[RMDB]
RNA sequence: GGGAACGACUCGAGUAGAGUCGAAAAGUGGACUUACCGGCUGAAGUGAGUGAAAAGAUGUACAUAGCUAAAGAAGGGUAUUGCUAUGUCAAUAUAUUUCUAGCCAUGCUAGUGAAUGUGAAUGAGGCGUAUAGUUAGCGUUCGCGCUAACUAUACGAAAAGAAACAACAACAACAAC
Reactivity to DMS in 0.01 (KOAc 150mM, MgCl2 10mM, bicine 150mM(pH8.5), 24C), signal-to-noise 5, nucleotides 027 to 126: g030u000g000g010a030c030u010u020a080c030c020g000g000c030u000g000a060a090g010u020g020a090g010u000g000a060a060a070a100g010a090u010g000u030a050c030a000u000a010g000c010u010a090a120a100g000a060a040g000g020g020u000a100u020u010g000c010u000a040u000g010u010c020a060a070u030a050u010a070u030u010u010c010u000a090g010c020c080a080u010g010c010u010a010g000u010g010a050a040u000g010u000g000a050a080u010g010a110g000g000
Reactivity to 2A3 in 0.01 (KOAc 150mM, MgCl2 10mM, bicine 150mM(pH8.5), 24C), signal-to-noise 9, nucleotides 027 to 126: g040u040g010g020a020c000u040u040a050c010c030g040g000c040u050g010a060a020g060u080g090a050g040u120g070a050a040a030a030g090a020u070g000u020a010c000a010u020a000g010c020u100a090a100a070g170a060a060g090g060g030u090a090u080u130g000c000u010a010u040g010u000c000a010a000u040a000u020a040u090u080u020c030u020a010g000c010c100a060u140g000c010u030a020g010u050g200a160a080u150g030u040g090a090a200u130g020a030g030g110